[RMDB]
RNA sequence: GGGAACGACUCGAGUAGAGUCGAAAAAUUUAAAAUCCUGUUCAACAAGCUCUUGAAUCGGUAAAGCAUCAAUGUCAGCCCGAACAGCUAUACAACUCAGACCUUGUCCCACUUCAGCAACCAGCCCUACCCCUAUUGUAUUCGUACAAUAGGGGUAAAAAGAAACAACAACAACAAC
Reactivity to 2A3 in 0.01 (KOAc 150mM, MgCl2 10mM, bicine 150mM(pH8.5), 24C), signal-to-noise 3, nucleotides 027 to 126: a000u220u290u200a060a090a000a060u040c010c000u000g040u060u050c020a060a060c010a090a050g000c010u020c010u170u080g080a110a050u070c040g000g010u080a080a040a060g030c030a030u060c040a080a090u110g070u060c020a010g030c020c020c010g020a040a030c000a010g000c020u080a060u030a190c100a070a010c030u020c040a030g030a180c010c010u020u080g040u050c040c010c000a020c020u070u050c020a030g000c000a000a030c030c010a020g050c010c000c000
Reactivity to DMS in 0.01 (KOAc 150mM, MgCl2 10mM, bicine 150mM(pH8.5), 24C), signal-to-noise 5, nucleotides 027 to 126: a090u010u010u020a040a050a110a100u000c020c000u000g020u000u000c060a070a060c110a080a120g000c080u000c040u000u000g010a080a040u000c180g000g020u000a050a090a100g010c030a050u000c090a040a050u000g010u000c040a120g000c060c010c040g010a070a060c090a070g020c040u000a070u000a090c080a070a090c080u000c050a060g000a050c070c020u000u000g000u000c020c020c020a050c090u000u000c040a040g020c030a050a040c090c050a060g000c010c030c050
An RNA of 177 nucleotides, treated with 2A3 and DMS and read out base by base.
It was measured as part of the RMDB library OK2TRN.
The RNA was probed in 150 mM KOAc, 10 mM MgCl2 and 150 mM bicine (pH 8.5) at 24 C.
For DMS the reverse transcriptase was MarathonRT.
2A3 adducts were read by reverse transcription with SuperScript II with manganese.